[RMDB]
RNA sequence: GGGAACGACUCGAGUAGAGUCGAAAACAGGCGUGACGGUGUACCUGUAAUCUCAGCUACUCGGGAAGCUGAGGCAGGAGAAUCACUUGAACCCGAGAAGCAGAGGUUGCAAUGAGCCAAGAUCAUUCCUCUGCACUCCAGCCUGGGUGACAGAGCAGAUUAGGGGUACGUUCGCGUACCCCUAAUCAAAAGAAACAACAACAACAAC
Reactivity to 2A3 in 0.01 (KOAc 150mM, MgCl2 10mM, bicine 150mM(pH8.5), 24C), signal-to-noise 1, nucleotides 027 to 156: c020a030g000g020c070g160u120g030a080c130g060g050u060g060u090a070c000c010u010g000u050a060a130u000c010u000c000a000g000c000u020a100c060u080c130g000g020g050a070a000g020c030u030g010a010g010g020c010a010g000g070a050g090a080a080u100c010a040c020u000u060g000a030a040c010c000c000g000a020g000a030a000g010c000a000g000a040g050g010u110u140g110c060a010a030u110g020a040g070c100c060a100a010g030a090u010c020a000u070u090c010c000u000c040u000g030c000a060c010u030c010c010a030g000c000c000u000g000g020g030u060g040a060c040a100g070a030g090c160a030

This 207-nucleotide RNA was probed chemically with 2A3. It was measured as part of the RMDB library OK3TST. The RNA was probed in 150 mM KOAc, 10 mM MgCl2 and 150 mM bicine (pH 8.5) at 24 C. The 2A3 profile rests on 571 reads.